[RMDB]
RNA sequence: GGGAACGACUCGAGUAGAGUCGAAAACUCUCAGACUGAGUGACACACUCACACUCACUGACUGAGUGACUCUCACUGAGACUCACUGACACUGAGUCACAGACUGUGAGACUCUGUGUCUCAGUGUUCAUCCUUGCCCCUUCGGGGGCAAGGAUGAAAAAGAAACAACAACAACAAC
Reactivity to 2A3 in 0.01 (KOAc 150mM, MgCl2 10mM, bicine 150mM(pH8.5), 24C), signal-to-noise 2, nucleotides 027 to 126: c010u000c020u020c020a030g030a080c110u040g000a010g020u040g170a020c010a000c010a000c200u090c010a020c000a030c010u190c010a260c130u160g060a040c150u060g010a030g000u010g060a150c010u020c000u000c020a020c010u020g000a000g030a050c000u010c070a080c100u050g010a000c000a000c030u020g020a000g000u020c000a000c000a020g050a030c000u140g040u140g300a060g040a070c010u000c020u040g030u000g000u000c020u010c000a000g020u020g040u020
Reactivity to DMS in 0.01 (KOAc 150mM, MgCl2 10mM, bicine 150mM(pH8.5), 24C), signal-to-noise 1, nucleotides 027 to 126: c250u000c000u010c020a020g040a130c230u020g000a040g000u020g000a250c230a130c070a010c070u000c050a050c090a070c090u010c060a110c230u020g000a060c230u000g010a020g010u040g000a130c080u000c000u000c010a080c030u000g000a030g010a020c070u000c140a110c100u010g000a080c020a050c030u000g050a010g010u000c000a010c010a020g000a030c060u000g000u000g020a160g010a140c300u010c000u000g030u000g060u020c010u000c010a000g000u000g000u000
Overview: The record gives the reactivity of an RNA of 177 nucleotides to 2A3 and DMS. The RNA was probed in 150 mM KOAc, 10 mM MgCl2 and 150 mM bicine (pH 8.5) at 24 C. Source: RMDB library OK2TRN, as collected in RNAgym. The 2A3 profile rests on 1,406 reads.